[RMDB]
RNA sequence: GGGAACGACUCGAGUAGAGUCGAAAAUGGACUUUUUACAGUUCCUACUUAUCCGGUUUUAACGCUGUUUUAUUGGCGCAAAGGUUUACGGAUAAACAACUAAUAAUUAAACCUUUUGUGUGCGAAGAUUGGACGUUUAGGUUCGCCUAAACGUCAACAUCUACACCCUGUUCGCAGGGUGUAGAUGAAAAGAAACAACAACAACAAC
Reactivity to 2A3 in 0.01 (KOAc 150mM, MgCl2 10mM, bicine 150mM(pH8.5), 24C), signal-to-noise 2, nucleotides 027 to 156: u140g040g010a070c070u150u110u050u100u220a160c230a050g040u100u070c020c010u030a040c010u020u000a000u010c000c010g000g030u000u020u000u020a050a010c010g010c040u030g160u120u140u060u200a230u200u220g000g000c010g000c010a020a000a000g010g000u020u000u000a000c000g010g010a010u080a140a080a010c020a050a010c050u220a050a130u140a230a030u110u100a040a020a000c000c000u040u050u100u090g060u030g020u050g070c050g080a080a060g020a160u140u230g030g010a010c000g000u000u010u000a000g000g020u010u040c210g060c010c000u020a000a000a000c000g000u000c000a000a000
Reactivity to DMS in 0.01 (KOAc 150mM, MgCl2 10mM, bicine 150mM(pH8.5), 24C), signal-to-noise 1, nucleotides 027 to 156: u010g010g040a080c030u020u000u000u030u020a160c060a120g000u000u020c030c060u000a090c090u010u000a010u000c010c000g010g020u000u000u000u000a250a060c020g000c000u010g040u010u010u010u000a130u000u040g040g020c050g010c030a030a060a030g030g010u010u010u000a170c000g020g010a050u010a010a070a130c080a050a200c160u000a110a170u010a110a140u010u000a000a040a010c010c000u000u010u010u000g030u010g030u010g030c050g000a200a160g020a090u000u010g030g000a070c010g040u000u010u000a030g010g000u010u010c300g060c000c010u000a000a010a000c000g000u010c010a030a070
Record summary:
Chemical mapping of a 207-nucleotide RNA with 2A3 and DMS. 2A3 adducts were read by reverse transcription with SuperScript II with manganese. Source: RMDB library M2RFPK, as collected in RNAgym. For DMS the reverse transcriptase was MarathonRT. Conditions: 150 mM KOAc, 10 mM MgCl2 and 150 mM bicine (pH 8.5), 24 C.